RNA sequence: GGGAACGACUCGAGUAGAGUCGAAAACGCGCGGCUCUGCCAACGACUCCGGUGCGAAGUACCAGCUCGCCGUCGGAAGCAUCAAGAGUCCACACCGCGUCGCUCACGCCACGACUGUAUUCAGACGACCUGCCUGACAGUACACUUCGGUGUACAAUUUAUAGUCGGGUUUCGACCCGACUAUAAAAAAAGAAACAACAACAACAAC
Reactivity to DMS in 0.01 (KOAc 150mM, MgCl2 10mM, bicine 150mM(pH8.5), 24C), signal-to-noise 1, nucleotides 027 to 156: c140g010c020g010c080g000g010c020u000c030u000g030c080c020a090a210c030g030a060c030u000c070c000g000g070u020g000c000g020a090a090g000u000a130c130c130a060g000c020u000c140g030c040c030g000u000c010g010g010a170a110g010c040a140u010c090a180a110g000a080g030u000c020c040a160c040a110c040c000g000c020g020u000c000g020c060u020c070a090c030g000c020c050a160c010g000a150c030u000g010u000a110u000u000c020a040g020a080c030g000a250c050c060u000g050c010c000u000g010a250c140a170g000u000a010c010a010c020u000u000c210g110g000u000g000u010a010c020a020a080
Reactivity to 2A3 in 0.01 (KOAc 150mM, MgCl2 10mM, bicine 150mM(pH8.5), 24C), signal-to-noise 2, nucleotides 027 to 156: c050g030c000g020c030g020g010c010u010c070u070g060c040c030a030a080c070g040a040c000u020c060c010g030g000u070g010c020g030a140a030g010u060a160c040c040a070g040c010u000c010g030c060c060g020u010c000g020g020a080a030g000c000a050u070c050a060a060g010a020g030u020c030c020a060c020a020c040c010g040c000g020u040c010g010c030u050c010a020c020g060c010c040a070c070g060a060c020u040g050u120a090u090u050c030a030g020a060c040g040a070c010c020u090g050c020c000u050g010a030c050a100g000u010a020c010a010c020u070u130c150g010g000u000g000u000a000c000a020a040